[RMDB]
RNA sequence: GGGAACGACUCGAGUAGAGUCGAAAAUAACUAGAUUGGAGAGUUGGAUUACAAAAUGCUUUUAAAGGGGAGAGUCUUGCUUGAAGCGUUCCAUUAUCCUGAGUGAGGUAUUUGAUUGAUAUUCCCCACCCGUAUUCAAGUUCGCUUGAAUACGGGUAAAAGAAACAACAACAACAAC
Reactivity to DMS in 0.01 (KOAc 150mM, MgCl2 10mM, bicine 150mM(pH8.5), 24C), signal-to-noise 2, nucleotides 027 to 126: u010a050a060c070u000a080g000a150u010u000g000g000a100g000a160g020u000u000g020g000a110u000u010a140c210a070a070a090a080u000g000c050u010u000u010u000a030a110a140g010g000g010g010a100g010a150g010u010c030u020u000g010c070u000u000g000a030a070g020c030g010u010u000c020c000a060u000u000a080u000c010c020u000g000a100g030u000g010a050g000g000u000a020u000u000u010g000a120u010u000g000a060u000a170u000u000c000c010c010c290
Reactivity to 2A3 in 0.01 (KOAc 150mM, MgCl2 10mM, bicine 150mM(pH8.5), 24C), signal-to-noise 1, nucleotides 027 to 126: u030a000a090c000u000a000g010a100u050u130g010g000a020g000a060g010u020u050g000g010a050u000u190a030c070a020a210a000a010u030g070c010u080u160u190u220a130a060a000g080g010g030g020a070g010a030g170u050c030u000u110g090c000u090u050g030a090a000g030c010g020u070u070c010c010a020u110u150a050u190c010c000u010g050a080g090u110g090a010g000g060u060a100u070u110u080g060a060u000u060g020a010u010a070u250u030c020c000c010c000